[RMDB]
This 177-nucleotide RNA was probed chemically with DMS. It was measured as part of the RMDB library OK2TRN. The RNA was probed in 150 mM KOAc, 10 mM MgCl2 and 150 mM bicine (pH 8.5) at 24 C. Reactivities are given for positions 27 through 126.
RNA sequence: GGGAACGACUCGAGUAGAGUCGAAAAAGGCGCUGAGAAAGCCAGCAGGCUGGCAAAGAAAAGGACCCUAGCGCAGGCCCCACACUCCUCCUCCUAACGGACGAGAGACCCCCCAAACCCACUGGAGUAUUCACCUAGAUUUCGAUCUAGGUGAAUAAAAAGAAACAACAACAACAAC
Reactivity to DMS in 0.01 (KOAc 150mM, MgCl2 10mM, bicine 150mM(pH8.5), 24C), signal-to-noise 2, nucleotides 027 to 126: a140g000g020c020g050c000u000g000a070g000a190a110a090g010c010c020a030g000c080a180g030g010c030u000g000g000c050a110a070a120g000a090a080a130a190g000g010a130c040c020c020u000a000g050c020g010c010a070g000g010c070c010c010c090a080c290a090c100u010c060c010u000c000c050u000c000c010u010a060a170c230g010g000a010c090g020a050g000a090g030a190c000c000c000c000c000c000a070a040a090c030c050c040a070c220u020g010g000a120g010